Background:
Conditions: 150 mM KOAc, 10 mM MgCl2 and 150 mM bicine (pH 8.5), 24 C. Structure probing data (DMS and 2A3) for a 177-nucleotide construct. 2A3 is a SHAPE reagent: it acylates the 2'-hydroxyl of flexible nucleotides of all four kinds. Reactivities are given for positions 27 through 126. The data come from the RNA Mapping Database (RMDB), library OK2TST. The DMS profile rests on 1,082 reads. DMS adducts were read by reverse transcription with MarathonRT.
[RMDB]
RNA sequence: GGGAACGACUCGAGUAGAGUCGAAAAGCCCUGGCGUUCGCGUAUGAAAUGCCACGGCACGAUGUUGGAAUGAUGCUCCAUGAUCGAGAGCAGGAUUUCAUCGCCCUCGCCGAUGAACGGCAUUCCACACCAGCAUGCGUUUCGACGCAUGCUGGUGAAAAGAAACAACAACAACAAC
Reactivity to DMS in 0.01 (KOAc 150mM, MgCl2 10mM, bicine 150mM(pH8.5), 24C), signal-to-noise 2, nucleotides 027 to 126: g000c020c020c080u000g020g040c000g020u000u000c050g010c300g010u000a120u030g050a080a000a000u000g010c010c010a050c300g000g040c010a080c170g000a050u000g020u000u000g000g000a040a010u000g050a160u000g000c010u000c000c020a130u030g000a080u010c190g030a200g020a040g000c070a020g010g000a120u000u000u000c030a010u000c000g010c060c070c090u000c060g010c090c000g000a090u010g000a060a060c140g020g040c000a170u000u000c000c040a140
Reactivity to 2A3 in 0.01 (KOAc 150mM, MgCl2 10mM, bicine 150mM(pH8.5), 24C), signal-to-noise 2, nucleotides 027 to 126: g010c000c020c000u010g010g020c060g030u000u040c060g020c100g110u260a160u300g030a130a030a000u070g050c030c000a010c040g050g020c020a000c070g050a050u110g020u140u060g040g030a070a020u050g070a060u050g060c030u000c000c010a050u140g200a200u280c140g050a080g000a000g300c000a000g020g050a050u050u000u010c010a000u030c030g060c030c000c020u050c090g050c010c000g020a080u140g070a110a050c010g030g000c010a030u080u000c040c010a030